Conditions: 150 mM KOAc, 10 mM MgCl2 and 150 mM bicine (pH 8.5), 24 C.
An RNA of 177 nucleotides, treated with DMS and 2A3 and read out base by base.
Values cover nucleotides 27 to 126.
DMS adducts were read by reverse transcription with MarathonRT.
Source: RMDB library OK2TRN, as collected in RNAgym.
For DMS, 3,508 sequencing reads were counted.

RNA sequence: GGGAACGACUCGAGUAGAGUCGAAAAGGAUCCUCGCACAGGAUUGUCUCUGUGUUCCGAAACUCCAACAGUAUUGCUUCGGGACACCUACAGCAAUACUGUAGGUAUAGAGAGUAGGUGAGGAUCGCUACUAUGCCACGUUCGCGUGGCAUAGUAGAAAAGAAACAACAACAACAAC
Reactivity to DMS in 0.01 (KOAc 150mM, MgCl2 10mM, bicine 150mM(pH8.5), 24C), signal-to-noise 4, nucleotides 027 to 126: g000g000a000u000c000c000u000c030g040c020a060c070a110g020g000a130u010u010g010u010c030u010c010u000g020u000g030u000u000c010c000g000a050a070a100c040u010c150c120a100a030c150a110g010u000a160u000u000g000c040u000u000c260g010g010g000a040c250a050c000c020u010a020c100a010g010c030a070a060u000a300c000u010g000u000a000g010g000u000a110u000a020g000a040g000a050g000u000a060g020g000u000g000a030g010g010a010u000c000g000
Reactivity to 2A3 in 0.01 (KOAc 150mM, MgCl2 10mM, bicine 150mM(pH8.5), 24C), signal-to-noise 3, nucleotides 027 to 126: g030g000a010u000c000c000u030c010g040c020a110c040a070g120g170a210u180u260g170u030c020u000c010u090g020u000g010u080u020c000c000g000a020a030a020c030u070c080c030a080a030c040a140g100u100a100u100u190g030c000u010u010c010g020g000g040a050c040a050c010c020u040a000c030a030g060c050a070a090u060a250c010u000g000u000a020g000g000u060a050u220a090g070a010g010a010g060u110a050g000g040u020g000a000g000g000a010u000c000g000